[RMDB]
Notes:
An RNA of 207 nucleotides, treated with 2A3 and read out base by base.
RNA sequence: GGGAACGACUCGAGUAGAGUCGAAAAAGGGAAGAAAAUAAUUUAGAAAGGAGAGUCCGCCCCAGCUUGCGGUGCGGCCGAAAGGCUGUAAGGCAUCCCGGAGAGGGGAGGCAAGGCGAAAGCCAAAAACGGUACACCAUCUUCGGAUGGUGUACAAUCUAUGGUACGAGUUCGCUCGUACCAUAGAAAAAGAAACAACAACAACAAC
Reactivity to 2A3 in 0.01 (KOAc 150mM, MgCl2 10mM, bicine 150mM(pH8.5), 24C), signal-to-noise 1, nucleotides 027 to 156: a000g040g000g040a060a050g070a050a150a070a060u230a060a110u100u280u220a180g040a100a150a020g020g020a010g010a000g000u000c010c010g000c000c000c040c000a040g050c000u120u060g110c040g000g000u020g000c020g030g000c010c000g050a020a000a000g020g000c020u020g050u100a030a040g060g010c020a050u040c000c030c060g010g000a000g020a010g010g010g000g000a000g020g000c060a020a120g000g000c020g000a090a000a000g020c010c050a000a070a000a000a000c110g060g030u000a020c010a010c000c000a040u000c020u040u030c220g090g000a020u000g000g020u000g000u000a000c000a000a000
The data come from the RNA Mapping Database (RMDB), library M2RFPK. The RNA was probed in 150 mM KOAc, 10 mM MgCl2 and 150 mM bicine (pH 8.5) at 24 C.